Structure probing data (DMS and 2A3) for a 177-nucleotide construct. The DMS profile rests on 1,785 reads. Conditions: 150 mM KOAc, 10 mM MgCl2 and 150 mM bicine (pH 8.5), 24 C. Source: RMDB library OK2TST, as collected in RNAgym. For DMS the reverse transcriptase was MarathonRT.
[RMDB]
RNA sequence: GGGAACGACUCGAGUAGAGUCGAAAAAGGACCGCCACCAGGUGAUCGUGCCGCGCAAAGGCAUCCUCGAACUGGCUCGUCUGCUCACCGAGCAGGACGGCGAAGUCGGCAUCGUCCUGGGCCAGCACGGAGUAGGAGGAUUCGUCCUCCUACUCCGAAAAGAAACAACAACAACAAC
Reactivity to DMS in 0.01 (KOAc 150mM, MgCl2 10mM, bicine 150mM(pH8.5), 24C), signal-to-noise 2, nucleotides 027 to 126: a050g010g000a100c050c090g040c020c020a150c060c030a090g030g010u000g000a050u000c060g000u000g000c000c020g030c170g020c290a040a120a140g010g010c010a020u000c050c020u000c040g020a050a270c000u000g010g010c020u010c010g040u000c020u000g010c000u000c040a230c170c180g000a050g010c010a000g010g010a010c060g000g000c040g000a050a050g000u010c050g010g000c080a040u000c160g000u010c010c060u000g020g010g000c010c010a120g020c100a160
Reactivity to 2A3 in 0.01 (KOAc 150mM, MgCl2 10mM, bicine 150mM(pH8.5), 24C), signal-to-noise 2, nucleotides 027 to 126: a000g070g000a050c030c040g000c030c010a040c040c040a050g070g060u040g050a070u080c060g020u040g000c010c000g060c020g040c080a110a040a020g020g000c010a020u050c000c000u060c040g040a150a050c000u030g030g000c020u030c020g040u010c020u010g000c010u000c020a300c060c230g000a010g000c000a040g080g070a040c030g020g000c020g020a050a000g070u110c040g000g000c040a050u080c040g020u040c010c020u030g020g050g000c030c000a020g050c050a020